[RMDB]
Source: RMDB library RSTRND, as collected in RNAgym.
The record gives the reactivity of an RNA of 207 nucleotides to DMS and 2A3.
DMS adducts were read by reverse transcription with MarathonRT.
RNA sequence: GGGAACGACUCGAGUAGAGUCGAAAAAUUAGCUGCUUAAUUUAGCGCAUGCGUUGCUCUUUGUCGGUUUACUCGUGGCUGACACUGAGUAUCAACUUUAACGAGUUACGUUUAACUACCUCACCUGAAUAGUUGAAAAGAGUCUUAACAGGUUAGCCGCAUAAAGUAUCUUCGGAUACUUUAUGCGAAAAGAAACAACAACAACAAC
Reactivity to DMS in 0.01 (KOAc 150mM, MgCl2 10mM, bicine 150mM(pH8.5), 24C), signal-to-noise 2, nucleotides 027 to 156: a150u000u000a110g040c030u000g010c030u000u000a070a100u000u000u010a090g020c030g000c040a070u000g030c070g020u010u010g000c010u000c050u010u010u000g020u000c000g040g020u000u000u000a030c020u000c040g030u000g000g020c010u000g000a030c000a020c010u030g000a140g010u010a090u000c110a020a100c100u010u000u030a110a050c030g000a070g020u000u000a190c020g000u000u000u000a010a040c030u000a010c030c030u070c030a080c010c050u000g000a140a040u000a030g030u000u000g000a050a020a030a100g010a210g010u000c070u000u000a100a130c010a030g020g020u000u000a150g020c090
Reactivity to 2A3 in 0.01 (KOAc 150mM, MgCl2 10mM, bicine 150mM(pH8.5), 24C), signal-to-noise 6, nucleotides 027 to 156: a010u130u090a040g010c030u050g010c030u120u120a110a160u300u250u210a110g020c040g010c060a020u180g010c020g070u080u240g010c010u000c000u000u000u010g010u010c020g000g020u000u010u030a000c000u000c000g010u000g000g000c010u000g000a000c000a000c010u010g000a000g010u020a060u070c030a030a130c040u100u150u230a040a000c010g000a000g000u000u020a010c010g000u000u000u030a020a010c000u010a010c000c010u010c010a010c010c010u010g010a040a020u010a040g010u000u030g010a000a020a010a010g020a060g110u060c090u210u140a150a060c010a010g010g000u010u030a050g070c050

The reactions ran in a buffer of 150 mM KOAc, 10 mM MgCl2 and 150 mM bicine (pH 8.5), at 24 C. 2A3 adducts were read by reverse transcription with SuperScript II with manganese. For DMS, 3,473 sequencing reads were counted.